Record summary: This 177-nucleotide RNA was probed chemically with DMS and 2A3. Values cover nucleotides 27 to 126. It was measured as part of the RMDB library M2PK90. For 2A3 the reverse transcriptase was SuperScript II with manganese. The DMS profile rests on 1,820 reads. The 2A3 profile rests on 3,345 reads.

RNA sequence: GGGAACGACUCGAGUAGAGUCGAAAAGUAAAAGCGCAAAAGAAGCUCAGUGCAAGAGCAAGACCUAAGUAUAAAAAUACAGCCAUGAGGUCAAACGCGGAACAAAACCGCGAAAUGGCAAUAAAAAGAUACAAUAGAACUUCGGUUCUAUUGUAUCAAAAGAAACAACAACAACAAC
Reactivity to DMS in 0.01 (KOAc 150mM, MgCl2 10mM, bicine 150mM(pH8.5), 24C), signal-to-noise 2, nucleotides 027 to 126: g000u010a030a100a050a170g040c060g000c080a060a040a070a100g000a130a150g030c020u000c050a070g000u000g000c120a100a050g010a080g010c030a060a120g010a020c000c020u030a080a120g010u000a040u010a010a100a060a040a080u010a070c070a040g010c030c030a020u000g000a070g000g010u010c030a080a050a190c010g020c000g010g010a040a030c160a090a060a090a050c000c010g000c010g000a020a040a030u000g000g000c000a060a080u010a020a050a080a050a050
Reactivity to 2A3 in 0.01 (KOAc 150mM, MgCl2 10mM, bicine 150mM(pH8.5), 24C), signal-to-noise 2, nucleotides 027 to 126: g030u050a000a050a060a050g060c070g000c090a110a090a020a070g060a120a040g000c010u000c030a020g080u040g210c040a060a030g000a000g000c020a030a020g010a000c000c000u050a110a020g090u060a050u160a210a200a050a050a010u100a050c020a000g000c010c010a020u040g020a020g000g010u000c000a000a010a020c000g000c000g000g020a090a000c030a060a100a030a050c000c000g010c000g010a040a000a010u030g010g000c020a020a010u130a080a060a010a000a000